Structure probing data (2A3 and DMS) for a 207-nucleotide construct. It was measured as part of the RMDB library RNAMAK. For DMS, 8,838 sequencing reads were counted. The reactions ran in a buffer of 150 mM KOAc, 10 mM MgCl2 and 150 mM bicine (pH 8.5), at 24 C.

[RMDB]
RNA sequence: GGGAACGACUCGAGUAGAGUCGAAAACGCUGGGUCCGAUGGUAGCAACAACCACUUGUCAGCCUGAUACUGAAGCGCGCACGGUAUAGGCUUGGAUUUAGUGGUUGUUGCGAGAGUAGGACCUGUGCUGAAGCGCGCACGGCAACCGAAAGGUGCGGAAUCAUUAUACGUUCGCGUAUAAUGAUUCAAAAGAAACAACAACAACAAC
Reactivity to 2A3 in 0.01 (KOAc 150mM, MgCl2 10mM, bicine 150mM(pH8.5), 24C), signal-to-noise 1, nucleotides 027 to 156: c030g010c000u030g000g010g000u000c000c000g040a120u010g050g020u020a030g010c000a000a000c000a000a000c010c000a010c050u130u090g010u050c010a000g010c030c000u130g180a020u010a020c000u020g060a260a080g030c050g010c030g000c070a030c020g010g000u010a010u000a000g040g000c030u030u150g170g000a050u210u240u300a070g000u000g000g000u000u000g000u000u000g000c060g010a000g000a000g000u030a000g020g040a000c010c000u000g000u000g010c010u030g010a060a040g010c030g000c010g000c010a010c010g020g020c010a050a070c010c040g150a140a050a010g030g020u030g000c010g040
Reactivity to DMS in 0.01 (KOAc 150mM, MgCl2 10mM, bicine 150mM(pH8.5), 24C), signal-to-noise 3, nucleotides 027 to 156: c040g030c030u000g020g000g020u010c000c000g000a180u030g000g010u000a260g020c010a030a030c030a040a030c000c000a020c020u010u000g000u000c030a080g000c000c000u000g010a090u010a020c000u010g000a100a070g000c030g040c060g050c030a300c010g000g020u000a060u000a050g020g010c010u000u010g040g020a060u000u010u000a050g040u000g030g020u000u000g010u000u010g000c000g000a110g010a080g010u000a300g000g000a030c010c010u010g030u010g000c030u000g010a090a110g000c040g010c030g010c020a150c020g020g000c010a090a230c030c040g000a120a130a150g000g010u010g010c040g000